Structure probing data (DMS and 2A3) for a 177-nucleotide construct. For 2A3 the reverse transcriptase was SuperScript II with manganese. The RNA was probed in 150 mM KOAc, 10 mM MgCl2 and 150 mM bicine (pH 8.5) at 24 C. Reactivities are given for positions 27 through 126. The data come from the RNA Mapping Database (RMDB), libraries RFM100 and RFMREP. For DMS the reverse transcriptase was MarathonRT.
[RMDB]
RNA sequence: GGGAACGACUCGAGUAGAGUCGAAAAAUUUUGAUGAAAUUUCAUCCUAUCCUUAGUUCCAAAACCGCUCCAAUGACUUCCUUUUUAUUGAUUUUUCCUUUUCUUUCCUUGGUUUAGUUUAUUUAUGAGUUGUCAUAACAUUCGUGUUAUGACAACUAAAAGAAACAACAACAACAAC
Reactivity to DMS in 0.01 (KOAc 150mM, MgCl2 10mM, bicine 150mM(pH8.5), 24C), signal-to-noise 2, nucleotides 027 to 126: a080u010u020u020u010g020a130u030g000a050a160a080u010u020u010c030a020u030c010c050u000a050u000c000c010u010u040a100g010u010u010c020c030a020a060a140a060c060c070g000c020u010c010c070a100a110u010g000a050c040u010u000c000c000u000u010u030u010u000a110u040u010g000a080u010u000u000u000u010c030c020u000u030u000u000c030u000u000u000c010c020u000u010g010g000u000u010u040a150g010u000u000u020a070u010u010u010a050u020g010
Reactivity to 2A3 in 0.01 (KOAc 150mM, MgCl2 10mM, bicine 150mM(pH8.5), 24C), signal-to-noise 2, nucleotides 027 to 126: a000u210u220u080u080g090a080u020g040a020a110a120u150u120u020c020a030u020c020c010u090a120u070c000c000u050u070a040g040u070u100c020c000a040a070a060a080c000c000g020c010u020c000c030a030a070u050g030a060c010u050u070c010c020u050u050u040u020u090a190u070u090g000a050u030u050u000u050u000c000c000u050u060u020u080c000u010u060u000c030c000u020u070g100g000u070u080u010a030g040u000u090u020a140u060u070u020a140u170g040